[RMDB]
Structure probing data (DMS and 2A3) for a 177-nucleotide construct. 2A3 adducts were read by reverse transcription with SuperScript II with manganese. Values are in units of 0.01, from 0 to 300, in steps of 10. The reactions ran in a buffer of 150 mM KOAc, 10 mM MgCl2 and 150 mM bicine (pH 8.5), at 24 C. The 2A3 profile rests on 1,020 reads.

RNA sequence: GGGAACGACUCGAGUAGAGUCGAAAACAGCAUAAACUGCGGUGCAAAUCCAUGCAGCUACAGGACGGAAUCCCGUGCGCUGCUUCUAGCCCUAGAGAAGCUGAUGAUUCCUCGUAUCCGCCACAGGUCGGCUCAUGACUUUCGAGUCAUGAGCCGAAAAAGAAACAACAACAACAAC
Reactivity to DMS in 0.01 (KOAc 150mM, MgCl2 10mM, bicine 150mM(pH8.5), 24C), signal-to-noise 1, nucleotides 027 to 126: c000a070g000c110a000u000a010a090a030c100u020g000c070g000g030u030g020c030a000a180a000u030c000c030a070u140g000c000a000g050c020u000a000c300a010g000g000a060c000g030g010a300a250u000c000c000c000g000u000g000c150g000c040u020g000c010u000u000c050u000a170g000c040c030c010u010a130g000a050g000a190a160g000c000u000g010a090u000g020a300u000u000c080c000u010c080g090u090a000u090c120c000g080c030c130a000c120a110g070g010
Reactivity to 2A3 in 0.01 (KOAc 150mM, MgCl2 10mM, bicine 150mM(pH8.5), 24C), signal-to-noise 2, nucleotides 027 to 126: c000a040g100c000a040u180a130a100a030c040u030g020c020g010g020u070g010c050a060a040a020u070c060c030a060u140g010c000a010g010c060u140a050c020a060g060g030a000c090g010g080a040a000u040c020c000c010g000u000g050c070g000c000u010g010c010u030u040c010u040a000g050c000c020c000u030a040g010a000g020a160a000g010c000u020g000a080u070g010a020u120u030c030c060u060c030g000u000a040u060c040c020g030c000c000a110c000a060g030g200